[RMDB]
RNA sequence: GGGAACGACUCGAGUAGAGUCGAAAAUAUUAGGGUGUGAGAGUAUCUCUCUCCCAGCCGGUUGGCGCAGCCAUCUUUUUCGACUUUACUUGGGUUAGCUGCGCGAACUGGCUGGCGUUCCCAGCAAACCCUAAUCUUGCUUCGGCAAGAUUAGGGUAAAAGAAACAACAACAACAAC
Reactivity to 2A3 in 0.01 (KOAc 150mM, MgCl2 10mM, bicine 150mM(pH8.5), 24C), signal-to-noise 1, nucleotides 027 to 126: u070a020u100u090a030g010g000g000u000g010u010g000a000g000a010g020u300a300u180c060u010c000u020c010u020c060c040c000a020g010c010c000g000g060u010u010g130g000c010g010c010a000g000c010c020a100u080c140u040u140u010u000u030c020g070a020c010u000u140u240a060c070u080u160g000g000g000u050u050a010g030c000u020g040c000g000c000g030a000a000c000u010g010g020c000u000g000g020c000g000u000u000c010c020c000a010g020c000a040a190